[RMDB]
RNA sequence: GGGAACGACUCGAGUAGAGUCGAAAAGACCUCGAAUGGCUCAACCGUGUUGAAACCUACAUCAAAUGGCCAUGGUAUAUAUGGCUUGCCAUAGCCCUGGCAUUUACUGCAUUUGUCGCAAUCCUCAUAACAAUCUUUCUUUGCACUGGUUGCUGUGAGAUAGUGACGGAUUCGUCCGUCACUAUCUAAAAGAAACAACAACAACAAC
Reactivity to 2A3 in 0.01 (KOAc 150mM, MgCl2 10mM, bicine 150mM(pH8.5), 24C), signal-to-noise 2, nucleotides 027 to 156: g030a020c010c040u080c090g090a120a100u140g000g000c000u010c070a050a010c010c030g020u060g060u090u070g050a160a050a050c010c010u050a070c080a170u070c030a050a070a050u070g120g050c000c000a000u020g060g040u080a180u020a030u010a000u290g000g000c030u050u080g010c030c000a020u010a030g000c000c010c000u000g000g000c010a020u060u080u040a090c050u000g060c010a050u040u020u120g030u020c020g010c090a010a060u070c010c010u050c050a060u040a100a060c030a040a040u030c030u040u060u050c060u100u090u120g020c070a030c040u030g040g000u010u030g000c020u010g030u010g040
This 207-nucleotide RNA was probed chemically with 2A3.
For 2A3, 1,560 sequencing reads were counted.
For 2A3 the reverse transcriptase was SuperScript II with manganese.
Values cover nucleotides 27 to 156.
The data come from the RNA Mapping Database (RMDB), library OK3TST.